[RMDB]
RNA sequence: GGGAACGACUCGAGUAGAGUCGAAAAGGGAGGCUCCGCCCAGGAAGACACAGUGAUGGAAUGCUGCUCGAAUGAGGAAACUCACUAUUUCAGUAAUAGUGUACACUUAGUACACUUCGAGGCAAUGUACUAAGUCCUUUGUACAAACCGAAGAGUCUAUGGUUCUAUACUUCGGUAUAGAACCAUAAAAAGAAACAACAACAACAAC
Reactivity to DMS in 0.01 (KOAc 150mM, MgCl2 10mM, bicine 150mM(pH8.5), 24C), signal-to-noise 2, nucleotides 027 to 156: g020g010g000a100g050g030c010u000c030c050g030c030c010c030a200g030g020a080a100g010a150c030a080c060a100g000u000g000a080u000g030g020a080a120u000g010c030u010g020c030u010c050g000a070a080u000g010a020g010g020a070a150a130c110u000c020a040c050u010a070u010u010u020c110a160g010u010a070a070u000a060g030u000g020u000a040c040a090c070u000u040a020g010u000a020c010a020c030u000u000c060g020a150g060g060c110a040a120u010g020u000a030c000u000a010a020g000u000c090c050u000u010u000g020u010a090c050a070a110a070c040c030g020a050a080g010a120g020u000c090
Reactivity to 2A3 in 0.01 (KOAc 150mM, MgCl2 10mM, bicine 150mM(pH8.5), 24C), signal-to-noise 4, nucleotides 027 to 156: g010g000g000a050g020g000c020u030c030c030g070c030c020c010a020g000g010a030a030g060a010c020a000c020a080g080u050g080a090u080g010g050a090a040u090g010c020u010g010c000u050c060g060a080a070u100g010a020g040g020a050a050a060c040u040c010a020c030u020a040u030u100u110c040a030g090u220a020a050u020a030g030u010g020u050a020c040a000c060u040u040a000g010u000a010c020a010c000u040u070c040g030a040g000g040c070a030a010u040g000u010a010c010u010a010a030g020u030c040c020u080u060u050g040u020a070c070a070a090a030c050c030g070a060a020g010a040g030u020c040